Source: RMDB library OK3TST, as collected in RNAgym. This 207-nucleotide RNA was probed chemically with DMS and 2A3. DMS adducts were read by reverse transcription with MarathonRT. The RNA was probed in 150 mM KOAc, 10 mM MgCl2 and 150 mM bicine (pH 8.5) at 24 C.
RNA sequence: GGGAACGACUCGAGUAGAGUCGAAAAGCAUUAAGAGAGUACUCUUAUUCCCACAACGUUGGUGACAACGUUGAUUUUCCGGUGGCCACCCGCCCGGGCCACCGUUACUCCACUCCACUCCUUCGGGACUGGUUUGGAGGAACAUGUGAGGGCUAAACAUCGUUUUAAUAUUCGUAUUAAAACGAUGAAAAGAAACAACAACAACAAC
Reactivity to DMS in 0.01 (KOAc 150mM, MgCl2 10mM, bicine 150mM(pH8.5), 24C), signal-to-noise 2, nucleotides 027 to 156: g000c060a120u000u000a030a050g030a100g030a300g030u010a030c020u020c010u020u000a150u000u000c000c020c000a290c020a010a000c010g050u010u010g010g010u010g000a300c000a030a010c010g000u000u010g000a050u010u000u000u000c110c020g080g080u000g040g000c000c010a040c000c030c200g000c000c000c020g010g000g010c010c010a020c020c000g010u000u010a140c010u000c000c000a000c050u000c000c000a020c020u010c000c010u010u000c240g060g030g010a040c020u010g000g000u000u000u000g020g020a010g020g000a020a030c050a060u010g010u000g010a090g080g010g040c030u000a100a120a160
Reactivity to 2A3 in 0.01 (KOAc 150mM, MgCl2 10mM, bicine 150mM(pH8.5), 24C), signal-to-noise 4, nucleotides 027 to 156: g020c030a060u070u120a020a000g010a010g040a070g240u180a160c000u020c000u010u030a020u030u010c010c000c010a010c000a000a000c000g010u000u000g010g060u100g070a040c000a010a000c000g000u000u010g030a050u090u050u130u090c060c010g000g000u000g000g010c010c010a050c050c120c080g000c000c000c000g000g010g000c010c000a000c000c010g000u000u070a020c000u000c000c000a000c030u000c000c000a010c020u000c000c000u020u070c220g050g000g000a000c000u010g000g000u000u000u000g000g010a000g000g010a000a060c080a070u170g080u090g210a130g000g000g000c000u020a020a020a010
For 2A3, 4,082 sequencing reads were counted.